[RMDB]
RNA sequence: GGGAACGACUCGAGUAGAGUCGAAAAGACACCGCGCAGAUCCCAAUGGCGGCUAAUAACGCCAAAAUAAAUGCGCGUAAAUGGCGUAAUAUAUAGACACAAUAUAAGUGAAAGCCGCCAAAGCAAACAUCUUCUUUCUAUUCGUAGAAAGAAGAUGAAAAGAAACAACAACAACAAC
Reactivity to 2A3 in 0.01 (KOAc 150mM, MgCl2 10mM, bicine 150mM(pH8.5), 24C), signal-to-noise 3, nucleotides 027 to 126: g050a020c020a010c120c040g000c000g000c010a010g000a110u020c000c000c000a020a040u060g010g000c000g030g000c010u060a100a060u060a120a070c000g020c000c000a080a150a000a010u120a020a070a060u090g000c010g000c010g020u020a020a100a070u050g000g010c010g020u010a120a030u070a090u010a010u040a150g130a080c010a000c020a130a060u170a050u070a300a060g020u020g070a210a070a030g020c010c010g000c000c030a040a000a000g000c010a020a000a060
Reactivity to DMS in 0.01 (KOAc 150mM, MgCl2 10mM, bicine 150mM(pH8.5), 24C), signal-to-noise 3, nucleotides 027 to 126: g000a130c090a090c200c010g000c010g030c010a150g010a090u000c000c010c000a150a240u010g000g000c000g010g000c020u010a080a080u010a100a020c010g000c000c000a000a080a080a090u010a030a090a060u000g010c010g000c010g010u000a060a130a070u000g000g010c000g000u010a080a110u000a080u000a080u000a090g010a190c060a030c050a040a080u010a130u020a100a070g010u010g000a090a170a100g000c030c010g010c000c000a010a080a090g000c180a110a100a120